[RMDB]
RNA sequence: GGGAACGACUCGAGUAGAGUCGAAAAGCUGUUUUAAAAAUCUGAAUAAUUCAUGUUUACUGUUUCUAGUUUCUAGCUGAAAUUGUCAGACAUGACUUUUAUUUCUUGAACACAGUAAUCAUAGGCAUUUUACAGUCUAUACCAGAUAAUUCCAAAAAAAUUAUGACCAGUUCGCUGGUCAUAAUUUAAAAGAAACAACAACAACAAC
Reactivity to 2A3 in 0.01 (KOAc 150mM, MgCl2 10mM, bicine 150mM(pH8.5), 24C), signal-to-noise 1, nucleotides 027 to 156: g000c000u010g010u060u070u040u030a130a260a080a060a080u090c060u070g040a030a030u070a080a060u070u110c030a030u030g000u030u030u000a000c000u000g010u010u010u010c040u060a000g010u060u060u060c130u170a080g030c000u000g040a040a050a050u020u050g040u010c010a000g060a060c000a080u010g000a060c030u030u180u020u060a060u000u140u000c030u020u080g000a010a010c060a000c000a010g000u070a060a000u030c000a010u000a020g070g000c010a080u190u090u160u160a100c000a000g060u060c000u070a010u060a060c070c020a030g010a060u050a020a120u060u100c300c300a000a280a070a000